[RMDB]
The record gives the reactivity of an RNA of 207 nucleotides to DMS and 2A3.

RNA sequence: GGGAACGACUCGAGUAGAGUCGAAAAAUGUGUAAGUAGUGAUUUAUGUUAAGGCUGAUUGUUAUUUCUCAAUCAUUAGACAUGUUUCCUUUGUUGACUGUCCUGGCCACGAUAUUUUGAUGGCUACUAUGCUGAACGGUGCAGCAGUGAUGGAUGACGAUUUAGUACGAUUCGUCGUACUAAAUCGAAAAGAAACAACAACAACAAC
Reactivity to DMS in 0.01 (KOAc 150mM, MgCl2 10mM, bicine 150mM(pH8.5), 24C), signal-to-noise 2, nucleotides 027 to 156: a090u000g010u010g000u000a060a090g030u000a060g020u010g020a110u000u000u010a010u000g000u000u010a080a110g020g020c070u000g000a090u010u010g020u010u000a060u010u000u010c040u010c040a090a070u000c040a120u000u000a130g010a080c040a060u000g000u010u000u000c010c020u000u000u000g020u010u000g000a090c040u010g010u000c020c030u010g030g020c010c010a030c040g010a110u000a150u000u010u000u000g010a110u010g020g000c010u000a060c090u000a090u000g000c050u000g010a070a100c070g030g010u000g040c040a110g000c000a020g020u010g020a100u000g000g020a100u000g020a220
Reactivity to 2A3 in 0.01 (KOAc 150mM, MgCl2 10mM, bicine 150mM(pH8.5), 24C), signal-to-noise 5, nucleotides 027 to 156: a000u120g030u040g030u060a010a110g040u010a010g020u040g060a060u050u070u100a090u130g080u040u070a100a050g070g000c050u030g080a120u040u090g070u070u120a170u100u140u050c060u010c010a040a040u020c010a020u020u060a030g040a080c030a040u030g040u020u050u010c010c000u040u080u050g040u030u030g030a080c040u030g030u030c020c000u010g020g000c000c000a010c060g020a010u030a180u220u190u090u110g180a230u030g020g040c020u000a000c020u050a050u050g000c010u020g020a130a030c060g050g080u140g010c010a000g000c010a010g020u030g080a060u100g030g020a020u050g050a020
The reactions ran in a buffer of 150 mM KOAc, 10 mM MgCl2 and 150 mM bicine (pH 8.5), at 24 C. 2A3 adducts were read by reverse transcription with SuperScript II with manganese. Source: RMDB library OK3TST, as collected in RNAgym.